[RMDB]
RNA sequence: GGGAACGACUCGAGUAGAGUCGAAAACGGACGUACCUCCAAUUCCUCACCCGGCGGAGGUGCUUGAGGAUCUGAAGAAGGAGUUUCCCGACAAGCCAAUCGAGGAGCUGGUCGCGAUGGCCGACGCCAAGGUGAACGAGGUGAUUGAGCAGCGUCGGGGAUGCAGUAAUUUCGAUUACUGCAUCCCAAAAGAAACAACAACAACAAC
Reactivity to DMS in 0.01 (KOAc 150mM, MgCl2 10mM, bicine 150mM(pH8.5), 24C), signal-to-noise 1, nucleotides 027 to 156: c070g000g030a070c010g040u000a040c040c030u000c000c010a040a300u000u000c010c000u000c020a120c010c060c050g020g000c080g010g060a200g070g040u000g040c020u010u030g010a190g020g000a060u000c050u010g000a120a050g000a220a120g010g010a120g010u000u000u000c000c000c000g030a120c070a030a180g000c030c080a060a080u010c040g010a150g020g010a030g020c000u020g000g050u000c030g030c060g000a110u000g060g000c020c010g010a080c050g040c020c020a080a120g000g000u000g000a050a150c090g000a150g010g000u000g010a080u010u000g000a140g000c090a070g050c050g030u000c020g010
Reactivity to 2A3 in 0.01 (KOAc 150mM, MgCl2 10mM, bicine 150mM(pH8.5), 24C), signal-to-noise 3, nucleotides 027 to 156: c060g040g020a010c020g040u030a060c040c000u030c020c020a010a050u030u040c030c000u000c010a040c000c000c000g020g010c040g040g010a020g030g000u020g100c020u060u110g060a050g030g020a030u060c060u120g070a090a070g030a140a030g140g050a010g040u040u140u050c010c020c010g000a020c030a070a000g060c040c020a040a080u060c040g020a100g000g010a000g040c020u060g050g010u070c040g010c040g190a080u100g030g000c020c000g010a010c020g010c060c010a160a160g000g010u140g020a100a060c110g020a060g000g000u110g020a080u010u130g030a020g010c070a000g030c040g020u000c030g010